[RMDB]
RNA sequence: GGGAACGACUCGAGUAGAGUCGAAAAGGUGCUAUCCGUUUCCUAGCGUUACGUCAGAUCCUCUACGAGGAAUGACAACAGCGCACAGUAUUAUCUCUGUAGAGGAACCAAACUAAAACCUACUAGGCAAUGUUUAAGGCUUCGGCCUUAAACAUUGAAAAGAAACAACAACAACAAC
Reactivity to 2A3 in 0.01 (KOAc 150mM, MgCl2 10mM, bicine 150mM(pH8.5), 24C), signal-to-noise 3, nucleotides 027 to 126: g060g010u090g070c070u060a090u140c040c020g000u030u040u000c010c000u030a060g000c020g000u030u030a010c030g010u010c040a010g030a300u050c010c010u050c030u090a090c200g010a010g000g000a040a020u020g000a020c000a030a020c120a060g000c010g020c000a000c020a010g050u080a090u300u090a120u100c080u020c020u110g060u040a040g020a030g190g060a070a060c040c020a120a080a050c050u140a080a040a030a040c020c000u000a040c040u060a120g080g000
Reactivity to DMS in 0.01 (KOAc 150mM, MgCl2 10mM, bicine 150mM(pH8.5), 24C), signal-to-noise 3, nucleotides 027 to 126: g010g020u020g010c130u000a100u000c090c150g000u000u000u000c000c000u000a150g040c010g010u010u000a100c300g000u010c010a030g000a200u000c000c000u000c000u000a160c200g010a010g000g010a020a160u000g020a010c010a070a160c200a030g020c030g000c060a110c090a060g000u010a070u000u010a090u000c130u000c000u000g000u010a100g010a030g000g000a050a050c060c070a070a060a070c140u000a040a070a110a080c030c020u000a080c090u010a100g010g030

Annotation: Chemical mapping of a 177-nucleotide RNA with 2A3 and DMS. The 2A3 profile rests on 2,204 reads. In probing experiments dimethyl sulfate is read out at A N1 and C N3, which are open when not base-paired. For 2A3 the reverse transcriptase was SuperScript II with manganese. Conditions: 150 mM KOAc, 10 mM MgCl2 and 150 mM bicine (pH 8.5), 24 C. DMS adducts were read by reverse transcription with MarathonRT.